RNA sequence: GGGAACGACUCGAGUAGAGUCGAAAAUGAUAUGGAGGUGAGGGUGGCGAGAGGUACACCGAAGCUACGUCGGAAACGACGUAGCCUCCGUGUACUACCCACCUCGCACCCUCACCUCCUAAGUCUACGUAUACCUCGAGUUCGCUCGAGGUAUACGAAAAGAAACAACAACAACAAC
Reactivity to DMS in 0.01 (KOAc 150mM, MgCl2 10mM, bicine 150mM(pH8.5), 24C), signal-to-noise 3, nucleotides 027 to 126: u010g040a050u000a300u020g000g000a000g020g010u010g010a010g030g000g040u010g010g040c010g030a010g000a120g010g010u010a010c000a000c010c270g000a020a040g000c020u000a000c000g010u000c000g020g000a210a120a280c000g020a000c000g010u000a000g010c010c050u000c000c300g000u010g020u000a020c000u010a020c070c110c140a300c120c000u000c000g020c000a050c000c000c000u000c010a000c000c010u010c010c000u000a000a100g010u000c020u020a120